[RMDB]
RNA sequence: GGGAACGACUCGAGUAGAGUCGAAAAGGUAUCCUGUAGGGUCUGCCUUAAGUAAGUGGUGUUGACGUCCGGGUCCUGCGCAAUGGGAAUCCAUGAACCAUGUCAGGUCCGGAAGGAAGCAGCAUUAAGUGGACACCCCCAUGUGCCGCAGGGUUACGCUAAUAUGUAUGUUCGCAUACAUAUUAGCAAAAGAAACAACAACAACAAC
Reactivity to 2A3 in 0.01 (KOAc 150mM, MgCl2 10mM, bicine 150mM(pH8.5), 24C), signal-to-noise 7, nucleotides 027 to 156: g060g020u080a050u060c010c010u060g070u120a230g010g050g040u010c050u040g030c030c000u090u050a130a060g090u050a120a050g020u080g090g100u020g020u110u060g090a030c020g020u000c000c010g010g010g020u080c000c000u030g000c060g000c060a100a230u010g000g000g030a030a090u060c080c020a040u100g040a040a040c020c000a010u000g020u020c000a000g000g010u000c000c010g000g020a010a010g020g000a030a010g000c000a000g000c000a020u050u030a100a030g040u050g050g020a020c020a130c040c020c000c010c020a060u120g080u090g110c030c020g000c010a010g020g020g000u050u050a040c090
Reactivity to DMS in 0.01 (KOAc 150mM, MgCl2 10mM, bicine 150mM(pH8.5), 24C), signal-to-noise 3, nucleotides 027 to 156: g000g000u000a060u000c000c020u010g040u010a120g010g020g020u010c000u010g040c010c000u000u010a050a210g020u010a100a090g040u000g010g020u010g030u010u020g000a300c000g010u000c000c000g010g010g010u000c000c000u000g030c210g070c080a090a080u000g010g010g020a120a180u020c110c180a140u000g020a120a300c020c070a030u020g020u000c030a060g000g030u000c010c010g000g020a010a020g000g020a220a060g010c010a070g020c010a020u000u000a080a160g020u000g020g010a070c050a110c010c000c010c030c030a200u000g000u000g010c040c050g010c050a130g010g020g040u000u010a070c210